[RMDB]
RNA sequence: GGGAACGACUCGAGUAGAGUCGAAAAGAUAUGGACGUGUCAAGCUUUUGACGGCGUAUCGGAAACGAUACCCGAUAAGCUUGCACGUCCUAAGUCAAAGGUUGCUCGUGUUCGCACGAGCAACCAACAGAUAAUAGUGCUUCGGCACUAUUAUCUGAAAAGAAACAACAACAACAAC
Reactivity to DMS in 0.01 (KOAc 150mM, MgCl2 10mM, bicine 150mM(pH8.5), 24C), signal-to-noise 6, nucleotides 027 to 126: g000a030u000a300u010g000g000a000c000g010u000g000u010c020a000a010g010c000u000u000u010u010g020a210c090g000g010c300g010u000a000u000c000g010g000a080a070a150c000g010a000u000a000c000c000c000g010a090u000a010a020g010c000u000u000g000c000a000c000g000u000c000c000u000a000a040g010u000c020a110a110a120g010g010u000u000g000c000u000c000g020u000g010u000u010c260g030c000a000c000g000a010g000c000a000a000c000c000a040a070
Reactivity to 2A3 in 0.01 (KOAc 150mM, MgCl2 10mM, bicine 150mM(pH8.5), 24C), signal-to-noise 7, nucleotides 027 to 126: g010a000u040a020u100g000g010a000c000g000u020g070u300c060a010a010g000c010u100u230u300u300g180a100c020g000g020c180g020u000a000u000c000g000g000a040a020a000c000g000a000u000a000c000c000c010g100a140u070a200a030g000c000u010u000g010c010a000c000g000u000c000c000u000a000a000g000u000c010a060a010a070g010g000u000u010g000c010u000c000g000u020g050u080u090c300g040c110a000c000g000a000g000c000a000a000c000c000a000a000
The record gives the reactivity of an RNA of 177 nucleotides to DMS and 2A3.
It was measured as part of the RMDB library TTRDEL.
2A3 is a SHAPE reagent: it acylates the 2'-hydroxyl of flexible nucleotides of all four kinds.